Notes:
This 207-nucleotide RNA was probed chemically with DMS and 2A3. The 2A3 profile rests on 5,581 reads. For 2A3 the reverse transcriptase was SuperScript II with manganese. The data come from the RNA Mapping Database (RMDB), library M2RFPK. The RNA was probed in 150 mM KOAc, 10 mM MgCl2 and 150 mM bicine (pH 8.5) at 24 C.
[RMDB]
RNA sequence: GGGAACGACUCGAGUAGAGUCGAAAAUUACUCUUGUUAGGUGAAAGUUGAUGGUCGCCGAGCCAGUCCGUACAUCCAAAACGGACUCUAUGUAGUAGGAAGUCGAGAGCCUAUGAGAGUUAGAGUCAUGCCUAUUUUGUGUUCGCACAAAAUAGAACUUAAGUUGUACGUUCGCGUACAACUUAAGAAAAGAAACAACAACAACAAC
Reactivity to DMS in 0.01 (KOAc 150mM, MgCl2 10mM, bicine 150mM(pH8.5), 24C), signal-to-noise 5, nucleotides 027 to 156: u010u010a040c020u000c020u000u000g010u000u010a050g050g010u020g010a100a100a150g010u000u000g010a090u010g000g010u000c010g050c050c020g010a140g020c050c070a090g010u000c020c000g030u000a100c100a130u010c300c140a070a120a120a090c030g000g020a020c010u000c030u010a050u000g030u000a130g040u000a060g040g020a050a090g020u010c080g000a170g020a300g010c010c020u000a030u000g000a120g010a120g010u000u000a060g000a130g020u000c030a110u000g010c040c000u000a020u000u000u000u010g030u010g010u000u010c300g000c020a030c000a010a010a010a010u000a010g000a050a110
Reactivity to 2A3 in 0.01 (KOAc 150mM, MgCl2 10mM, bicine 150mM(pH8.5), 24C), signal-to-noise 7, nucleotides 027 to 156: u090u050a020c000u000c010u040u060g090u090u090a030g010g020u070g070a150a100a090g060u110u120g070a100u070g030g060u050c040g020c120c020g010a010g030c020c020a010g010u000c000c000g010u020a050c040a180u110c080c060a040a050a020a030c010g000g010a000c000u000c010u010a110u050g080u020a060g030u010a030g000g100a120a020g020u030c040g030a010g010a010g230c010c010u020a030u030g020a020g000a000g030u030u060a040g010a000g060u050c050a070u180g070c000c000u010a000u000u010u000u000g020u010g020u040u060c220g040c070a000c000a000a000a000a000u000a000g020a010a000